Notes:
Chemical mapping of a 177-nucleotide RNA with DMS and 2A3. The RNA was probed in 150 mM KOAc, 10 mM MgCl2 and 150 mM bicine (pH 8.5) at 24 C. For 2A3 the reverse transcriptase was SuperScript II with manganese.

RNA sequence: GGGAACGACUCGAGUAGAGUCGAAAAGAUAUGGACUUGUGCGGGAGCUGUAUCGGAAACGAUACGCUUUGAUCGCAUUGAGUCCUAAGUCAAAACUGAAUUCGCGGGUUCGCCCGCGAAUUCAGAACAAUGCAAAUCCGUUCGCGGAUUUGCAUUGAAAAGAAACAACAACAACAAC
Reactivity to DMS in 0.01 (KOAc 150mM, MgCl2 10mM, bicine 150mM(pH8.5), 24C), signal-to-noise 1, nucleotides 027 to 126: g010a020u000a300u000g010g000a030c000u000u000g030u000g010c010g000g000g000a000g010c010u030g030u010a010u000c010g000g020a110a050a130c010g000a020u000a000c010g010c000u000u000u000g010a080u010c010g000c000a000u000u010g020a010g020u000c000c000u010a020a090g010u010c030a070a100a150a240c000u000g010a000a030u000u010c000g010c010g010g010g010u000u010c260g000c010c030c010g020c000g000a000a000u000u000c000a000g000a030a120
Reactivity to 2A3 in 0.01 (KOAc 150mM, MgCl2 10mM, bicine 150mM(pH8.5), 24C), signal-to-noise 1, nucleotides 027 to 126: g030a010u040a040u200g000g000a000c000u010u030g010u010g030c050g040g000g030a020g000c180u160g150u010a010u000c010g030g030a060a070a030c000g010a000u000a010c020g020c020u170u110u120g140a040u130c020g000c000a000u110u300g010a000g020u030c000c000u000a110a000g040u020c060a020a000a130a180c000u000g000a000a000u000u020c000g000c070g030g000g090u030u110c280g130c030c000c000g020c000g000a000a010u000u010c000a000g000a000a000